An RNA of 207 nucleotides, treated with DMS and 2A3 and read out base by base. The reactions ran in a buffer of 150 mM KOAc, 10 mM MgCl2 and 150 mM bicine (pH 8.5), at 24 C. For DMS the reverse transcriptase was MarathonRT. For 2A3 the reverse transcriptase was SuperScript II with manganese.
[RMDB]
RNA sequence: GGGAACGACUCGAGUAGAGUCGAAAAAUUGCCGAUCUAAACUUAACACCGCUAAUACACAACGUAGCCGUAAAAAGUGGUUUAUGAAUUGGUCCAGAACUGAUAAUAUCUAUAUACCAAUCUCUAGAAGUAUAUUGACAAUAUUCAUUUAAUACAGUCACCUUGCAUUAUUCGUAAUGCAAGGUGAAAAAGAAACAACAACAACAAC
Reactivity to DMS in 0.01 (KOAc 150mM, MgCl2 10mM, bicine 150mM(pH8.5), 24C), signal-to-noise 2, nucleotides 027 to 156: a060u000u000g000c020c040g020a100u020c010u020a080a050a080c020u010u000a110a110c010a090c150c020g030c020u000a060a220u020a110c180a160c030a100a110c030g000u000a120g060c080c040g030u000a040a100a030a110a120g030u000g020g010u000u000u000a060u000g010a060a140u000u000g040g000u020c030c030a190g000a090a120c050u030g010a050u000a040a190u000a070u010c000u000a060u010a030u000a050c010c010a040a160u010c090u000c060u010a130g010a090a070g000u000a010u000a010u000u010g010a030c000a050a070u010a060u000u000c040a060u000u000u010a050a110u000a100c030a150g030
Reactivity to 2A3 in 0.01 (KOAc 150mM, MgCl2 10mM, bicine 150mM(pH8.5), 24C), signal-to-noise 4, nucleotides 027 to 156: a000u160u100g010c010c010g010a020u020c010u050a040a030a030c010u070u080a060a030c040a030c130c000g000c020u030a060a020u180a110c110a010c030a210a120c120g030u020a020g030c050c000g060u060a060a080a000a010a040g050u040g030g010u020u020u030a040u100g150a180a070u030u020g010g000u030c030c010a050g050a190a060c070u070g030a060u030a170a060u040a050u050c010u020a010u000a000u020a050c010c000a130a070u020c050u040c020u160a050g010a070a000g040u010a020u000a020u050u050g020a020c020a070a050u060a060u050u060c030a050u130u130u140a110a120u230a080c010a030g100